[RMDB]
RNA sequence: GGGAACGACUCGAGUAGAGUCGAAAAUCAGGACGAGCUGGAGUGGGCAACCACGAACGCGAGGACUGUGAAAACGGGGAGGCUGUGAGUAACAACGAUAACCUCCCCCGGUGAUUCGAUGGAGCGCGCCCACAAUCAUGUUCGCAUGAUUGUGGGCAAAAGAAACAACAACAACAAC
Reactivity to DMS in 0.01 (KOAc 150mM, MgCl2 10mM, bicine 150mM(pH8.5), 24C), signal-to-noise 3, nucleotides 027 to 126: u000c050a000g030g060a150c000g030a300g000c000u010g000g000a300g010u060g000g000g000c210a170a150c000c000a030c010g020a220a300c300g010c000g000a300g000g030a110c000u010g000u000g000a050a010a080a120c300g040g000g030g010a030g000g030c020u000g010u010g000a300g070u000a170a100c300a050a000c020g010a190u030a090a300c020c020u000c030c010c010c000c010g000g000u010g010a040u000u020c040g000a080u020g020g040a020g000c100g000c150
Reactivity to 2A3 in 0.01 (KOAc 150mM, MgCl2 10mM, bicine 150mM(pH8.5), 24C), signal-to-noise 2, nucleotides 027 to 126: u090c000a000g000g000a000c000g000a010g000c010u020g030g020a050g040u000g000g040g010c100a070a050c010c020a000c000g020a000a000c020g010c000g010a020g000g020a010c010u000g030u010g090a030a040a000a090c030g010g010g000g000a000g010g000c070u070g030u030g190a060g060u080a060a030c060a020a010c010g050a040u090a120a020c020c000u020c010c000c000c020c040g040g040u070g050a090u100u010c040g030a030u090g050g030a060g060c000g000c030